[RMDB]
An RNA of 177 nucleotides, treated with 2A3 and DMS and read out base by base. Values cover nucleotides 27 to 126.
RNA sequence: GGGAACGACUCGAGUAGAGUCGAAAAUUUCUCCUCUUUCUGCCUAUCUGUUGUUCAUAAUCAACUGCGUAGUUCUGGUGAAGGAGUAAAUUAAACUGCCUCGCACCGCCGUACUCAUUUUUACCUCCCGUGACAAUGAUUUCGAUCAUUGUCACGGAAAAGAAACAACAACAACAAC
Reactivity to 2A3 in 0.01 (KOAc 150mM, MgCl2 10mM, bicine 150mM(pH8.5), 24C), signal-to-noise 3, nucleotides 027 to 126: u030u040u010c000u000c000c000u060c000u040u080u030c040u050g190c000c000u050a040u070c040u010g040u010u000g090u170u100c050a060u190a110a060u150c010a040a020c000u030g010c010g080u060a010g020u070u090c020u070g170g000u050g030a060a070g040g060a040g030u150a000a040a080u090u100a100a070a060c110u130g020c040c010u000c020g030c030a000c000c010g080c010c010g010u030a040c000u030c090a110u000u020u010u030u030a030c030c010u070c020
Reactivity to DMS in 0.01 (KOAc 150mM, MgCl2 10mM, bicine 150mM(pH8.5), 24C), signal-to-noise 2, nucleotides 027 to 126: u000u010u000c010u000c000c070u010c020u020u000u010c000u000g020c170c010u000a090u000c020u000g000u000u000g010u000u040c200a150u040a030a140u060c000a150a070c020u000g020c090g010u000a030g010u000u010c090u050g000g040u000g030a110a050g040g050a060g020u000a020a020a120u020u000a070a040a230c040u030g000c030c010u000c060g050c090a050c000c010g090c090c010g000u020a030c050u040c040a030u000u020u050u050u000a170c100c030u000c140